[RMDB]
RNA sequence: GGGAACGACUCGAGUAGAGUCGAAAAUCGAGCGCCAUCCCGACAAUGCACCAGACCAUCAUUUCCAGCGGCAGGCGGCGCUUGCGCAGAGUCACCGUGCCGGAUUCGGCAAGACAACGGGAGAUGAUGAUAGGUACAUCUUCGGAUGUACCUAUCAAAAAGAAACAACAACAACAAC
Reactivity to 2A3 in 0.01 (KOAc 150mM, MgCl2 10mM, bicine 150mM(pH8.5), 24C), signal-to-noise 3, nucleotides 027 to 126: u040c000g000a000g000c040g020c020c050a060u060c040c000c010g020a050c060a020a150u140g020c030a010c010c010a040g070a090c010c000a040u050c010a010u010u060u060c030c030a040g020c040g030g030c030a020g010g000c000g010g020c050g020c020u030u070g010c030g010c030a020g010a010g100u010c010a030c040c040g090u050g030c020c020g020g030a070u300u280c010g000g000c010a030a030g110a060c030a080a010c070g050g000g000a080g000a030u040g010a010
Reactivity to DMS in 0.01 (KOAc 150mM, MgCl2 10mM, bicine 150mM(pH8.5), 24C), signal-to-noise 5, nucleotides 027 to 126: u000c040g010a070g020c050g010c040c040a110u000c010c010c000g020a130c170a080a050u010g010c040a080c060c060a080g000a090c090c030a060u010c040a050u000u010u000c020c010a120g010c050g030g000c030a060g000g010c020g000g000c020g000c030u000u000g000c060g010c050a070g000a150g000u000c010a110c050c030g020u000g020c020c010g010g000a160u010u010c020g020g020c010a080a070g000a080c110a090a090c080g010g000g000a040g000a040u000g000a130
Source: RMDB library OK2TST, as collected in RNAgym. This 177-nucleotide RNA was probed chemically with 2A3 and DMS. DMS adducts were read by reverse transcription with MarathonRT. For 2A3 the reverse transcriptase was SuperScript II with manganese. For 2A3, 4,459 sequencing reads were counted.